[RMDB]
RNA sequence: GGGAACGACUCGAGUAGAGUCGAAAAGAUCUCGAGUGUACGAACGAUCGAUCGAGUUCGUGAUCGUUCUCGUGUGAUCGAUCGAUCGAGUUCGUGUACGAUCACGUGUUCGUGUGUGUACUCUCACUCUCGUUCUCGUGAUCGUGUGAACGAGAGUUGUAAGUACCUACUUCGGUAGGUACUUACAAAAAGAAACAACAACAACAAC
Reactivity to 2A3 in 0.01 (KOAc 150mM, MgCl2 10mM, bicine 150mM(pH8.5), 24C), signal-to-noise 4, nucleotides 027 to 156: g090a070u060c010u020c010g030a050g050u030g030u050a000c020g010a050a000c030g020a040u050c020g010a010u010c010g010a010g060u110u090c020g010u090g070a130u120c090g060u150u070c060u030c040g070u140g040u040g030a100u040c010g000a020u010c010g020a040u000c000g020a030g080u060u010c010g000u020g020u050a010c000g010a030u040c010a000c000g070u090g070u100u100c030g010u020g010u050g020u020g010u190a190c020u040c030u020c160a010c020u050c000u000c010g000u000u000c010u000c010g010u020g000a090u070c050g020u050g000u030g050a020a000c020g000a010g010a010g030u010
Reactivity to DMS in 0.01 (KOAc 150mM, MgCl2 10mM, bicine 150mM(pH8.5), 24C), signal-to-noise 1, nucleotides 027 to 156: g010a100u000c000u000c010g020a110g000u000g020u000a030c030g020a040a050c020g020a020u000c010g000a010u010c010g020a100g020u010u000c060g030u010g000a120u010c090g020u000u000c050u000c040g000u010g000u010g000a080u020c000g000a050u000c000g030a010u020c020g010a120g010u000u000c010g020u010g050u000a050c030g000a080u010c020a020c020g010u000g010u000u000c060g070u000g000u000g000u020g040u010a120c160u000c090u000c040a070c000u000c000u000c000g020u000u000c000u010c020g050u000g070a060u000c050g000u010g000u000g030a040a010c010g010a070g010a070g000u010
Description: Chemical mapping of a 207-nucleotide RNA with 2A3 and DMS. For DMS the reverse transcriptase was MarathonRT. The DMS profile rests on 4,627 reads. For 2A3 the reverse transcriptase was SuperScript II with manganese. For 2A3, 2,575 sequencing reads were counted.